[RMDB]
RNA sequence: GGGAACGACUCGAGUAGAGUCGAAAACCCAGACCGUUCGCGGUCUGGGAAAACCGGAAUAAACAUGGGCCCAUGAGCCGAACCGGAACGGCGUCCGCCCAAAAACUUGUGUCUUCGGACACAAGAACGAAGAGAUUAAGUUCGCUUAAUCUCUUCGAAAAGAAACAACAACAACAAC
Reactivity to 2A3 in 0.01 (KOAc 150mM, MgCl2 10mM, bicine 150mM(pH8.5), 24C), signal-to-noise 5, nucleotides 027 to 126: c000c010c000a000g000a000c000c000g020u070u070c190g010c020g110g000u000c000u000g000g000g040a030a030a010a040c010c000g010g060a190a300u150a110a080a020c070a120u060g000g000g020c030c040c070a180u170g030a010g000c000c000g010a030a010c030c030g030g020a040a040c010g000g000c000g040u060c050c030g000c000c000c000a070a090a010a020a030c010u010u010g000u000g000u000c000u020u050c290g120g000a000c000a000c010a000a000g000a010a020
Reactivity to DMS in 0.01 (KOAc 150mM, MgCl2 10mM, bicine 150mM(pH8.5), 24C), signal-to-noise 5, nucleotides 027 to 126: c000c000c010a010g010a010c000c000g020u000u010c200g020c010g020g000u000c000u010g020g010g000a010a010a030a110c020c010g000g010a100a070u000a030a060a060c190a070u000g010g000g010c010c090c100a210u000g000a160g010c010c010g000a040a050c030c020g000g010a160a120c020g000g000c000g010u000c060c100g000c010c000c010a040a050a060a130a140c010u000u000g010u000g000u000c000u000u010c160g030g000a010c000a010c010a000a000g010a060a120
Structure probing data (2A3 and DMS) for a 177-nucleotide construct. DMS (dimethyl sulfate) methylates the pairing face of unpaired adenines and cytosines. The DMS profile rests on 6,135 reads. Conditions: 150 mM KOAc, 10 mM MgCl2 and 150 mM bicine (pH 8.5), 24 C.